[RMDB]
RNA sequence: GGGAACGACUCGAGUAGAGUCGAAAAUCAUGGAUCAUGUGAUCCAUGACGAUCCACCAUGAUACUAGGCUGAGUCUGACAUGCGUACUGUCUCUAGGAUCCAGUCAUGCUCUGGUACGCUAGCAUGACCCCGCGCAUAAUUCGUUAUGCGCGGGGUAAAAGAAACAACAACAACAAC
Reactivity to 2A3 in 0.01 (KOAc 150mM, MgCl2 10mM, bicine 150mM(pH8.5), 24C), signal-to-noise 1, nucleotides 027 to 126: u030c000a000u010g010g010a010u000c040a130u300g300u300g240a000u000c020c000a000u000g000a000c000g030a050u000c000c000a020c000c030a060u100g040a040u050a110c040u050a030g050g000c040u070g070a020g110u070c080u220g040a020c010a070u090g000c020g060u030a020c020u020g090u110c010u000c030u090a050g140g000a040u020c040c010a020g040u030c020a050u050g010c010u060c030u140g000g040u030a020c000g030c030u020a010g020c000a010u040g020
Reactivity to DMS in 0.01 (KOAc 150mM, MgCl2 10mM, bicine 150mM(pH8.5), 24C), signal-to-noise 2, nucleotides 027 to 126: u000c000a000u000g000g000a020u000c010a230u020g010u030g010a020u020c000c010a030u010g030a030c050g010a100u020c010c030a140c080c040a120u000g010a060u000a070c040u000a050g020g020c130u000g010a110g030u000c020u000g010a040c060a050u000g010c080g000u010a070c030u000g000u030c020u000c100u010a100g020g000a050u000c000c020a060g000u000c000a050u000g020c080u000c080u010g010g000u000a030c150g010c010u000a050g010c020a010u000g010

This 177-nucleotide RNA was probed chemically with 2A3 and DMS. The DMS profile rests on 1,555 reads. For 2A3 the reverse transcriptase was SuperScript II with manganese. For DMS the reverse transcriptase was MarathonRT. Source: RMDB library OK2TRN, as collected in RNAgym. The 2A3 profile rests on 2,301 reads.